[RMDB]
RNA sequence: GGGAACGACUCGAGUAGAGUCGAAAACAAAAACGGAUUGUGUCAGUAAUCACAACAAACAAAAACAAACGGAUUGUGUCCCUAAUCACAAAAACAAAACAAAAUGGAUUGUGUCCGUAAUCACAAACCACGGACGGAUAUUCGUAUCCGUCCGUGGAAAAGAAACAACAACAACAAC
Reactivity to 2A3 in 0.01 (KOAc 150mM, MgCl2 10mM, bicine 150mM(pH8.5), 24C), signal-to-noise 1, nucleotides 027 to 126: c050a000a000a000a000a000c210g000g020a100u050u050g000u000g000u000c000a060g200u300a090a060u170c000a000c060a090a000c000a000a200a000c000a050a000a140a000a000c020a000a060a210c000g000g090a120u000u060g010u000g000u030c070c000c000u170a020a090u140c120a000c050a000a110a000a000a030c220a000a050a000a000c090a000a200a040a000u060g020g000a000u000u000g000u000g040u030c000c040g040u000a000a020u200c010a000c100a250a110a000
Structure probing data (2A3) for a 177-nucleotide construct. It was measured as part of the RMDB library OK1LIB. 2A3 adducts were read by reverse transcription with SuperScript II with manganese. The RNA was probed in 150 mM KOAc, 10 mM MgCl2 and 150 mM bicine (pH 8.5) at 24 C.